[RMDB]
RNA sequence: GGGAACGACUCGAGUAGAGUCGAAAACAGGAAUUGUCGACAAAGCGAACACAGUCUUAGAUAUGACGAAGCACUUCGUCGAGGUGAUUUCUCGUUAUGACGAACUUGUAGAGAUGCUCGUUCAACAAGUGAAGAGCAUAUUCGUAUGCUCUUCACUAAAAGAAACAACAACAACAAC
Reactivity to DMS in 0.01 (KOAc 150mM, MgCl2 10mM, bicine 150mM(pH8.5), 24C), signal-to-noise 7, nucleotides 027 to 126: c050a060g010g010a040a020u000u000g010u000c020g020a030c020a040a060a070g020c010g000a080a120c130a090c100a260g000u000c020u000u010a140g010a170u010a130u010g000a000c000g000a100a130g000c040a020c040u000u000c040g000u000c030g010a030g010g010u000g010a040u000u000u000c020u000c100g010u000u010a080u010g010a070c070g000a100a030c020u000u000g000u010a090g010a170g000a100u010g010c160u000c020g010u000u000c030a070a080c160a080
Reactivity to 2A3 in 0.01 (KOAc 150mM, MgCl2 10mM, bicine 150mM(pH8.5), 24C), signal-to-noise 8, nucleotides 027 to 126: c010a000g020g030a040a040u050u050g070u070c010g010a010c020a020a050a020g020c030g060a110a010c100a010c030a100g010u010c010u050u140a110g060a160u270a090u300g000a010c000g020a030a010g040c040a010c070u020u020c030g060u020c030g010a020g030g130u210g020a030u030u050u000c030u010c050g020u040u050a110u280g040a020c020g010a050a040c020u040u060g050u190a050g010a010g000a080u100g050c040u000c020g020u000u030c030a070a060c030a060
Chemical mapping of a 177-nucleotide RNA with DMS and 2A3. Values cover nucleotides 27 to 126. Conditions: 150 mM KOAc, 10 mM MgCl2 and 150 mM bicine (pH 8.5), 24 C.